[RMDB]
Chemical mapping of a 177-nucleotide RNA with 2A3 and DMS. The RNA was probed in 150 mM KOAc, 10 mM MgCl2 and 150 mM bicine (pH 8.5) at 24 C. 2A3 adducts were read by reverse transcription with SuperScript II with manganese. The DMS profile rests on 915 reads.
RNA sequence: GGGAACGACUCGAGUAGAGUCGAAAAGGCUAUUUUAUUGAAUACAGGAAUUUGAAUUAAAGGCUGCAUUCAUGAGACCAGGCUCUGAACCCUGUGGGGACGGCCUGGCUGCAUCUGUCACCUUGAGCAUCACCAUCCCAUUCGUGGGAUGGUGAUGAAAAGAAACAACAACAACAAC
Reactivity to 2A3 in 0.01 (KOAc 150mM, MgCl2 10mM, bicine 150mM(pH8.5), 24C), signal-to-noise 1, nucleotides 027 to 126: g090g010c030u000a130u100u200u000u020a090u110u070g010a040a010u030a090c010a020g030g140a110a120u100u120u150g130a200a150u010u160a110a040a020g140g030c000u000g040c000a000u000u030c000a050u020g000a010g040a130c000c020a000g000g030c010u060c070u300g160a100a110c000c000c060u070g280u300g010g000g000g000a030c000g000g000c000c000u050g000g030c000u000g000c000a030u080c010u060g020u010c020a040c090c150u040u030g030a010g060
Reactivity to DMS in 0.01 (KOAc 150mM, MgCl2 10mM, bicine 150mM(pH8.5), 24C), signal-to-noise 1, nucleotides 027 to 126: g010g020c000u000a050u010u000u010u000a050u000u000g010a030a030u000a030c020a030g030g010a210a140u000u000u000g000a080a070u000u000a040a050a050g000g000c010u000g000c030a000u000u000c000a010u000g020a080g010a130c000c010a020g000g000c000u010c040u000g000a140a180c030c000c080u010g000u010g040g030g000g000a280c120g020g000c020c020u000g000g000c010u000g030c050a050u010c100u000g000u000c120a090c010c010u000u010g010a060g010